[RMDB]
Record summary: An RNA of 177 nucleotides, treated with DMS and read out base by base. It was measured as part of the RMDB library OK2TST. For DMS the reverse transcriptase was MarathonRT.

RNA sequence: GGGAACGACUCGAGUAGAGUCGAAAAACAAUGAAACAUACCGUUGACAACAAAAGGCUUUCGUCUCCUUUGACAGAUUCUGGUAACCGCCGGACUAAGAAGCCAAAGUUGAGAAAGUACAAGGCCAAAAUAGUCGACGAUUCGUCGUCGACUAUUUAAAAGAAACAACAACAACAAC
Reactivity to DMS in 0.01 (KOAc 150mM, MgCl2 10mM, bicine 150mM(pH8.5), 24C), signal-to-noise 1, nucleotides 027 to 126: a160c140a090a090u000g000a140a090a060c160a160u000a080c120c030g010u000u000g000a090c080a010a050c070a070a110a070a180g000g010c000u010u000u020c050g000u000c010u000c060c020u000u000u000g010a000c010a080g010a160u000u000c000u010g000g010u000a030a050c300c180g010c010c050g000g020a080c260u000a070a120g010a070a070g000c000c000a000a000a050g020u030u010g000a300g000a060a070a010g010u000a080c110a070a000g000g010c000c020a030